Chemical mapping of a 207-nucleotide RNA with 2A3 and DMS. It was measured as part of the RMDB library M2RFOK. The RNA was probed in 150 mM KOAc, 10 mM MgCl2 and 150 mM bicine (pH 8.5) at 24 C. The DMS profile rests on 1,701 reads. The 2A3 profile rests on 1,613 reads.
RNA sequence: GGGAACGACUCGAGUAGAGUCGAAAAGCUCUGGAAUUGAGGCCCCUCUAACAAUAAUCCAAAACUACUUCGCAGAGUAAUCUGCGGAAUCGUAGGAUGCCCAUUACUAUCUAUUUUUGGAGCAUCUAAAACUGUCAGUGCUUCGGCACUGACAGAACUUAUCACUGAUCUUCGGAUCAGUGAUAAGAAAAGAAACAACAACAACAAC
Reactivity to 2A3 in 0.01 (KOAc 150mM, MgCl2 10mM, bicine 150mM(pH8.5), 24C), signal-to-noise 3, nucleotides 027 to 156: g030c010u000c030u050g030g060a150a060u160u060g010a030g030g030c020c000c020c020u060c100u110a120a090c080a060a120u150a030a030u080c040c020a050a050a010a100c030u040a010c020u020u030c000g000c000a010g010a020g040u090a040a150u020c000u000g010c000g000g010a030a060u070c050g030u050a040g040g010a000u020g000c000c000c010a010u050u040a050c080u050a080u150c040u090a210u120u070u020u020u030g020g000a120g020c010a000u000c000u060a000a010a030a140c000u000g000u000c000a010g000u000g000c000u030u090c140g070g000c000a000c010u000g000a000c000a000g000a000a000
Reactivity to DMS in 0.01 (KOAc 150mM, MgCl2 10mM, bicine 150mM(pH8.5), 24C), signal-to-noise 1, nucleotides 027 to 156: g000c040u000c040u000g020g030a070a200u010u000g000a080g000g020c090c000c060c000u000c090u000a130a080c030a090a080u000a080a220u000c050c090a040a100a140a180c060u000a030c100u000u000c010g000c010a050g060a050g020u000a170a110u000c000u000g050c010g020g020a040a020u020c120g010u010a180g000g010a030u000g000c000c010c000a040u000u000a040c130u040a180u000c130u000a160u000u000u000u000u010g030g020a110g020c020a040u010c000u020a020a090a110a150c010u000g040u000c000a000g000u000g010c040u000u000c300g050g070c010a010c000u020g000a000c000a000g010a010a090